An RNA of 207 nucleotides, treated with DMS and 2A3 and read out base by base. The data come from the RNA Mapping Database (RMDB), library OK3TST.
RNA sequence: GGGAACGACUCGAGUAGAGUCGAAAAAAAGCUCCUGCCUGGCCUGGGAAACAUUUUGUGAGGGAGAGAGAGCAAGCUUUCCUGAAUAUGAGUGAUUAUGCUUUUGUCUGUGCAUUUCAGAAUUUACAAAAUGCUUUCUAGGAGUUUAAAUGAGAUAAUACAGGGCAUAUUUCGAUAUGCCCUGUAUAAAAGAAACAACAACAACAAC
Reactivity to DMS in 0.01 (KOAc 150mM, MgCl2 10mM, bicine 150mM(pH8.5), 24C), signal-to-noise 1, nucleotides 027 to 156: a100a070a140g050c020u000c010c000u000g020c010c030u000g000g020c000c010u000g050g010g010a100a050a040c010a040u010u000u000u000g060u030g030a170g020g000g020a130g000a110g000a080g000a110g050c150a040a080g000c040u000u000u000c020c010u000g010a150a100u000a050u000g000a150g000u010g000a120u000u000a060u000g030c040u000u000u000u000g010u010c080u000g030u010g030c030a090u010u000u000c050a050g020a080a140u000u010u000a050c020a030a020a030a040u000g020c000u000u010u000c000u010a080g020g000a080g010u000u020u000a030a050a110u000g010a200g000a110u000a160
Reactivity to 2A3 in 0.01 (KOAc 150mM, MgCl2 10mM, bicine 150mM(pH8.5), 24C), signal-to-noise 2, nucleotides 027 to 156: a000a000a040g030c020u050c020c000u020g040c000c040u030g050g000c000c010u000g080g010g020a030a000a000c010a000u030u010u000u010g000u010g020a060g000g030g000a020g000a000g000a010g010a010g060c060a110a010g000c000u010u010u010c000c000u040g130a050a020u170a080u110g020a030g080u070g060a050u070u160a020u020g000c010u020u060u130u160g140u140c050u070g070u050g120c010a040u120u120u020c020a030g030a100a080u080u030u070a050c000a000a040a000a010u000g010c040u000u000u030c010u020a000g110g000a010g010u100u140u050a070a170a130u140g000a040g070a140u300a130